[RMDB]
Annotation:
The record gives the reactivity of an RNA of 177 nucleotides to 2A3 and DMS. Values cover nucleotides 27 to 126. The data come from the RNA Mapping Database (RMDB), library OK1LIB. The RNA was probed in 150 mM KOAc, 10 mM MgCl2 and 150 mM bicine (pH 8.5) at 24 C.
RNA sequence: GGGAACGACUCGAGUAGAGUCGAAAAACAGUGUACCAGCAGAGGUUUGGACAAAGUAUGGAGAGAAGAGAGUGCUCAAACCGAGAUGGAUGGAUGCUAGGGUCUGUUCAGACCAUGCGGCCCUGAACUUUCAUACGCCCUUCGGGGCGUAUGAAAGAAAAGAAACAACAACAACAAC
Reactivity to 2A3 in 0.01 (KOAc 150mM, MgCl2 10mM, bicine 150mM(pH8.5), 24C), signal-to-noise 5, nucleotides 027 to 126: a000c040a030g030u030g010u090a160c020c000a030g010c030a020g100a080g120g010u040u060u090g020g030a010c040a050a190a020g070u050a180u220g080g020a070g020a020g010a210a020g070a030g000a020g040u090g040c010u010c020a060a090a070c050c020g010a020g000a090u080g060g010a020u030g070g000a020u070g020c050u070a100g080g000g010u000c030u030g050u070u110c050a020g020a040c020c000a030u090g030c030g030g000c020c000c000u000g030a040a030
Reactivity to DMS in 0.01 (KOAc 150mM, MgCl2 10mM, bicine 150mM(pH8.5), 24C), signal-to-noise 2, nucleotides 027 to 126: a160c040a070g040u000g090u000a050c010c030a040g000c010a120g020a170g000g010u000u000u010g030g000a020c050a050a030a110g010u000a100u010g000g030a060g000a070g000a050a050g020a120g030a110g000u000g000c070u000c080a060a080a000c130c060g020a120g020a110u000g000g010a090u000g000g000a150u010g020c040u000a050g000g010g060u020c020u000g010u020u000c110a000g000a100c000c030a070u030g000c050g040g000c050c000c010u010g000a100a160